[RMDB]
RNA sequence: GGGAACGACUCGAGUAGAGUCGAAAAGAAAUGCAACCGGCCGUCGCGCCAACCCGUCCCUCGAUGCGGCGAUCGGUUCAGGUUCGUCCUGCGGAGGCCCGCCGCUUUCCCUGAAGCGGCGGGUCAACCUCACAAUUGUGUUCGCACAAUUGUGAGGAAAAGAAACAACAACAACAAC
Reactivity to 2A3 in 0.01 (KOAc 150mM, MgCl2 10mM, bicine 150mM(pH8.5), 24C), signal-to-noise 2, nucleotides 027 to 126: g010a000a030a000u130g050c080a020a020c010c000g010g000c000c000g050u010c000g000c020g030c050c000a030a110c040c010c040g060u090c050c000c000u050c060g040a060u180g000c010g000g000c000g000a070u010c010g000g000u020u070c040a030g040g050u060u090c070g020u210c000c010u030g040c030g060g080a060g060g000c000c000c000g000c010c000g000c020u030u030u010c010c000c050u090g060a050a000g000c050g030g000c000g000g030g000u000c000a000a000
Background
The record gives the reactivity of an RNA of 177 nucleotides to 2A3. Conditions: 150 mM KOAc, 10 mM MgCl2 and 150 mM bicine (pH 8.5), 24 C. Values cover nucleotides 27 to 126. Source: RMDB library RFM100, as collected in RNAgym.